Source: RMDB library OK3TST, as collected in RNAgym. An RNA of 207 nucleotides, treated with 2A3 and read out base by base.
RNA sequence: GGGAACGACUCGAGUAGAGUCGAAAAACAGGACAGAUGAACGAGGUAAAAAACAGUUCGAUGCGAACACGAAUAUAUCAGGAAUUAUCGAGAUACUCCGGAUAAUAUGCAUCGCUUAAUUCGAUUGUUGCUCGGAUUUAAUCUCAACUCGAUAUCCCAGUGGUAGAACCUUCGGGUUCUACCACUGAAAAGAAACAACAACAACAAC
Reactivity to 2A3 in 0.01 (KOAc 150mM, MgCl2 10mM, bicine 150mM(pH8.5), 24C), signal-to-noise 1, nucleotides 027 to 156: a020c020a020g000g020a000c010a010g000a020u030g040a070a080c060g000a110g070g090u220a040a030a000a000a050a080c100a100g060u160u200c010g010a030u100g010c020g030a150a010c060a010c130g040a110a000u110a000u000a030u070c050a030g010g010a000a060u070u010a100u200c100g020a110g030a110u140a100c050u030c050c000g000g020a000u000a100a000u030a150u140g030c020a010u000c030g020c120u030u300a090a110u160u110c000g020a020u030u090g030u000u060g000c000u000c000g000g000a000u010u010u060a070a040u050c010u010c110a000a050c020u000c000g140a080u020a000u060c030c010
2A3 adducts were read by reverse transcription with SuperScript II with manganese. Values cover nucleotides 27 to 156. Conditions: 150 mM KOAc, 10 mM MgCl2 and 150 mM bicine (pH 8.5), 24 C.